[RMDB]
RNA sequence: GGGAACGACUCGAGUAGAGUCGAAAAUCUGCUUCGGCAGACUUCGGCCGUAGGUUCGAACUACUUCUAUGAUAUCGAAGAACAUUCGUUCGAAAGAGCGAAUGGGAGAUAUCAACAAUGAAGCGAACCUAAACGGGUUGCUCCUAUUCGUAGGAAAGUGCAGUAGGGAAUUCGUUCCCUACUGCACAAAAGAAACAACAACAACAAC
Reactivity to 2A3 in 0.01 (KOAc 150mM, MgCl2 10mM, bicine 150mM(pH8.5), 24C), signal-to-noise 2, nucleotides 027 to 156: u010c010u000g010c020u050u070c300g190g000c010a010g020a000c010u010u020c000g020g000c020c040g100u040a010g000g000u000u030c000g040a120a070c110u140a080c010u290u020c020u040a160u080g000a000u000a000u000c020g120a300a050g000a060a020c000a000u000u010c000g030u010u000c010g060a090a080a050g010a000g030c000g000a000a000u000g000g000g010a040g000a000u000a000u140c000a020a010c040a010a210u190g010a010a000g000c000g000a000a010c000c000u000a000a060a000c000g000g000g000u000u000g010c000u000c000c000u000a140u070u200c190g130u190a120g140g060a110a100a200

Structure probing data (2A3) for a 207-nucleotide construct. The data come from the RNA Mapping Database (RMDB), library RNAMAK. 2A3 adducts were read by reverse transcription with SuperScript II with manganese.